[RMDB]
RNA sequence: GGGAACGACUCGAGUAGAGUCGAAAACGUGCGUACUGGGCCGCCGGCACAAUGUUCUACCCAGCCGUCUCAGAGGACGCGGUUCGACGACGAUCAGCCAGCUGGUCAGCGGGGUCCUCCUAGCUAGCGAUAGUAGGACUUUCGAGUCCUACUAUCGAAAAGAAACAACAACAACAAC
Reactivity to DMS in 0.01 (KOAc 150mM, MgCl2 10mM, bicine 150mM(pH8.5), 24C), signal-to-noise 5, nucleotides 027 to 126: c100g030u000g030c070g020u000a070c050u010g020g010g020c080c130g030c050c040g000g010c070a050c100a090a080u000g010u000u010c080u000a140c100c010c020a100g010c060c030g010u010c060u010c080a090g000a090g020g010a030c040g000c040g000g000u000u000c060g020a060c040g000a090c100g010a040u000c040a070g010c060c120a140g010c020u000g010g010u000c020a090g020c040g010g010g010g000u000c020c030u000c020c070u000a090g020c120u000a070g010
Reactivity to 2A3 in 0.01 (KOAc 150mM, MgCl2 10mM, bicine 150mM(pH8.5), 24C), signal-to-noise 3, nucleotides 027 to 126: c000g020u070g030c020g050u060a080c040u040g040g020g000c020c030g030c020c010g050g040c020a020c010a090a130u180g030u080u060c040u090a100c010c020c020a010g030c030c000g030u030c020u010c060a060g020a050g080g050a010c010g020c030g050g000u050u060c060g030a040c030g010a020c040g010a040u020c000a000g060c080c040a060g080c030u020g000g020u020c020a010g050c030g010g020g000g000u010c010c000u010c010c010u040a060g050c030u060a030g100
This 177-nucleotide RNA was probed chemically with DMS and 2A3. DMS adducts were read by reverse transcription with MarathonRT. The RNA was probed in 150 mM KOAc, 10 mM MgCl2 and 150 mM bicine (pH 8.5) at 24 C. The 2A3 profile rests on 6,788 reads. For DMS, 6,349 sequencing reads were counted.